[RMDB]
RNA sequence: GGGAACGACUCGAGUAGAGUCGAAAACGGAUGGGAAAGCAUGCUGACUCACUAGCACGUACGGAAACCAUCCCGGAGCAAGUAACCUGUACGUCUAUUCUGCACCAACGUUCCAGCAUGCGAAAGGAUGGGGAUGGGAAAGCAUGCUCCAUCCGAAAGUUUGCACUCUUUUCGAAGAGUGCAAACUAAAAGAAACAACAACAACAAC
Reactivity to 2A3 in 0.01 (KOAc 150mM, MgCl2 10mM, bicine 150mM(pH8.5), 24C), signal-to-noise 2, nucleotides 027 to 156: c000g000g000a000u000g000g000g100a260a090a000g000c000a010u020g000c000u020g000a010c000u000c020a000c050u070a020g100c180a080c170g210u280a050c140g090g040a090a000a000c010c000a010u000c000c000c020g000g000a020g000c000a090a020g010u110a030a100c020c000u030g010u000a010c010g020u000c050u030a200u130u070c120u170g060c120a090c060c030a040a040c020g000u090u030c100c020a000g040c060a040u080g000c000g000a010a000a020g000g000a000u000g020g000g000g030a050u060g020g010g000a000a000a000g010c000a000u020g000c000u000c000c000a000u000c000c000g000a010a010
An RNA of 207 nucleotides, treated with 2A3 and read out base by base.
Reactivities are given for positions 27 through 156.